An RNA of 177 nucleotides, treated with 2A3 and DMS and read out base by base. Source: RMDB library OK2TRN, as collected in RNAgym. For DMS the reverse transcriptase was MarathonRT. The RNA was probed in 150 mM KOAc, 10 mM MgCl2 and 150 mM bicine (pH 8.5) at 24 C. The DMS profile rests on 26,007 reads.

RNA sequence: GGGAACGACUCGAGUAGAGUCGAAAAAAUGGAAGCCGGCGGCACCUCGCUAACGGCCAAGAAUUGGAGCCAAUCAAUUCUUGCGGAGAACUGUGAAUGCGCAAACCAACCCUUGGCCAUCGCGUCCCUACGUUAUACUUUUCGAAGUAUAACGUAGAAAAGAAACAACAACAACAAC
Reactivity to 2A3 in 0.01 (KOAc 150mM, MgCl2 10mM, bicine 150mM(pH8.5), 24C), signal-to-noise 8, nucleotides 027 to 126: a000a000u150g020g010a110a020g030c030c030g070g050c060g020g010c040a030c020c020u020c020g000c010u020a080a020c050g010g000c000c000a010a010g010a010a030u030u020g020g020a030g030c020c010a010a060u040c010a010a020u050u010c000u010u060g080c100g060g100a060g000a060a040c090u110g020u060g230a120a050u120g020c070g000c100a070a070a110c010c010a010a030c030c000c000u010u020g000g000c000c010a040u060c040g000c010g030u040c020c000
Reactivity to DMS in 0.01 (KOAc 150mM, MgCl2 10mM, bicine 150mM(pH8.5), 24C), signal-to-noise 9, nucleotides 027 to 126: a060a060u000g000g010a110a130g020c020c050g010g020c110g020g010c030a110c040c030u000c050g020c030u010a110a120c140g010g000c020c000a010a010g010a030a090u000u000g000g010a140g000c050c070a050a090u000c010a030a070u000u000c010u000u000g020c180g010g000a080g010a030a030c150u000g010u000g010a070a070u000g010c130g010c040a070a090a090c020c020a020a040c070c030c010u000u000g000g010c000c010a080u000c190g000c030g000u000c030c040